[RMDB]
RNA sequence: GGGAACGACUCGAGUAGAGUCGAAAAUAUGGAAGUGAGAGACCCAUCCAUGAGUCUGAAAAUCGAACAGAAUCUGCGACACAACAUACACAAUUUACUGCAACAAGAGGGAACAUUGAUAUACAAGGUUUGUAUAAACCUUCGGGUUUAUACAAACAAAAGAAACAACAACAACAAC
Reactivity to 2A3 in 0.01 (KOAc 150mM, MgCl2 10mM, bicine 150mM(pH8.5), 24C), signal-to-noise 3, nucleotides 027 to 126: u240a040u040g010g010a060a050g040u040g060a120g000a010g030a120c020c040c010a030u000c000c000a050u060g040a010g070u000c010u020g020a040a050a020a180u140c080g010a050a010c000a040g030a030a020u000c020u010g010c030g070a000c000a000c000a120a040c020a030u080a030c050a010c010a090a000u140u070u070a070c040u050g040c010a050a020c010a050a090g050a040g030g020g040a030a000c010a050u040u120g080a070u150a020u030a190c020a030a050g170
Reactivity to DMS in 0.01 (KOAc 150mM, MgCl2 10mM, bicine 150mM(pH8.5), 24C), signal-to-noise 4, nucleotides 027 to 126: u010a070u000g000g020a110a060g040u010g010a090g010a120g010a100c060c010c020a110u010c030c040a050u010g010a080g000u000c050u010g010a060a080a060a100u010c120g020a050a070c090a040g010a100a040u020c030u020g000c070g000a070c110a030c030a050a060c050a040u000a040c090a040c060a060a030u000u010u000a100c080u010g010c060a050a040c080a040a080g000a060g000g010g000a050a030c050a060u000u010g010a070u010a040u000a080c130a080a080g010
Source: RMDB library OK2TST, as collected in RNAgym. Structure probing data (2A3 and DMS) for a 177-nucleotide construct. The reactions ran in a buffer of 150 mM KOAc, 10 mM MgCl2 and 150 mM bicine (pH 8.5), at 24 C.